An RNA of 177 nucleotides, treated with 2A3 and DMS and read out base by base. For DMS the reverse transcriptase was MarathonRT. Reactivities are given for positions 27 through 126. Reactivities are rounded to 0.1 and cut off at 0 and 3. Conditions: 150 mM KOAc, 10 mM MgCl2 and 150 mM bicine (pH 8.5), 24 C. The data come from the RNA Mapping Database (RMDB), library OK2TST. 2A3 adducts were read by reverse transcription with SuperScript II with manganese.

RNA sequence: GGGAACGACUCGAGUAGAGUCGAAAAGACAUGUGUAGAACAUUAAUGGCAAGCUGAACAAGAGACUUUGAUGUGUUUUCUGUUUGGCUGAAUAUAGAGCUACCAAUCAAAGCAGGUUCUAGCUGGAUGACGUACUCACUUUCGAGUGAGUACGUCAAAAAGAAACAACAACAACAAC
Reactivity to 2A3 in 0.01 (KOAc 150mM, MgCl2 10mM, bicine 150mM(pH8.5), 24C), signal-to-noise 1, nucleotides 027 to 126: g060a030c040a070u080g010u030g070u090a000g010a100a010c040a100u000u190a020a090u060g040g000c040a050a010g020c010u040g040a000a000c040a080a020g010a000g020a090c020u080u160u280g120a190u200g120u000g030u050u000u020u080c020u030g020u000u010u000g010g000c000u000g010a010a010u150a000u030a010g130a010g070c010u060a040c000c030a060a030u090c040a080a190a000g080c040a010g010g000u040u010c030u050a020g000c010u010g050g030a050
Reactivity to DMS in 0.01 (KOAc 150mM, MgCl2 10mM, bicine 150mM(pH8.5), 24C), signal-to-noise 2, nucleotides 027 to 126: g030a070c210a020u000g030u030g000u010a080g030a030a070c060a080u000u000a110a030u010g020g050c170a160a020g030c000u000g010a030a030c000a030a010g010a020g010a010c010u000u000u010g000a150u020g030u020g000u000u000u000u000c030u000g000u000u000u000g000g020c000u000g000a060a100u010a100u000a070g000a110g020c010u000a030c030c090a110a110u000c140a080a090a040g010c040a150g010g010u000u000c010u000a080g030c030u000g000g010a280